[RMDB]
RNA sequence: GGGAACGACUCGAGUAGAGUCGAAAAGAUAUGGAGUGAUAACGACAUGGAGAAGGUCGGAAACGACCUUACCUCCAACAGCGUUGCACUCCUAAGUCAAAGGGUUAGGCGUUCGCGCCUAACCCAACGCAUUACUUCGGUUCGCCGAAGUAAUGCGAAAAGAAACAACAACAACAAC
Reactivity to 2A3 in 0.01 (KOAc 150mM, MgCl2 10mM, bicine 150mM(pH8.5), 24C), signal-to-noise 2, nucleotides 027 to 126: g000a000u000a020u080g000g020a000g020u030g110a300u080a130a000c000g060a010c240a300u300g000g000a020g000a030a000g000g000u020c010g000g000a000a000a030c010g000a000c000c010u000u030a160c010c030u000c000c100a110a080c130a020g030c010g010u000u030g000c010a000c000u010c000c000u000a010a000g000u000c030a100a110a120g060g010g000u020u020a010g010g000c040g030u150u160c300g040c000g000c190c000u020a020a010c000c000c000a010a000
Reactivity to DMS in 0.01 (KOAc 150mM, MgCl2 10mM, bicine 150mM(pH8.5), 24C), signal-to-noise 2, nucleotides 027 to 126: g010a010u000a080u000g030g040a010g020u000g020a060u000a020a000c010g010a030c030a170u010g000g000a030g000a040a000g020g010u000c000g020g010a010a010a030c000g040a020c010c000u000u000a020c300c020u000c000c000a070a170c160a110g000c030g040u010u000g000c000a000c010u040c000c000u000a010a050g020u000c010a140a170a170g010g000g010u000u000a000g010g030c000g060u000u010c300g040c090g000c010c000u000a040a010c000c000c000a000a020